[RMDB]
RNA sequence: GGGAACGACUCGAGUAGAGUCGAAAAGAAAAGGUUUCGUUUCUGGAUCCGGCACACGGUGAAGACGCAGUGGUUCUACUGGUUCGUGAUCGUCCUCGUCUUUCUGAACACAGUCUGUGUUGCCGUAGAGUAAAUAUUUAUUCGUAAAUAUUUACUCAAAAGAAACAACAACAACAAC
Reactivity to DMS in 0.01 (KOAc 150mM, MgCl2 10mM, bicine 150mM(pH8.5), 24C), signal-to-noise 7, nucleotides 027 to 126: g000a070a080a100a110g010g010u000u010u010c240g010u000u000u000c020u000g000g010a300u010c150c000g000g000c040a050c040a030c030g000g010u010g000a080a040g010a040c040g020c110a090g020u000g010g010u010u000c050u000a050c030u000g010g000u000u010c060g010u000g000a060u000c060g010u000c060c020u010c070g000u000c030u000u000u000c060u010g000a050a040c100a070c070a080g000u010c050u000g010u010g000u000u000g010c020c020g000u010a170
Reactivity to 2A3 in 0.01 (KOAc 150mM, MgCl2 10mM, bicine 150mM(pH8.5), 24C), signal-to-noise 5, nucleotides 027 to 126: g070a000a120a010a020g130g000u030u060u130c050g000u030u010u000c040u020g040g030a040u030c050c000g000g000c010a000c000a000c020g000g060u100g090a060a010g020a000c010g000c110a050g060u090g130g060u090u040c020u050a050c020u040g100g030u090u150c040g040u060g030a050u040c030g040u050c030c000u040c020g070u030c020u030u100u000c040u070g110a120a010c170a010c010a100g080u000c010u050g010u010g060u090u090g000c000c010g020u010a010

The record gives the reactivity of an RNA of 177 nucleotides to DMS and 2A3. For DMS the reverse transcriptase was MarathonRT. Conditions: 150 mM KOAc, 10 mM MgCl2 and 150 mM bicine (pH 8.5), 24 C. DMS (dimethyl sulfate) methylates the pairing face of unpaired adenines and cytosines.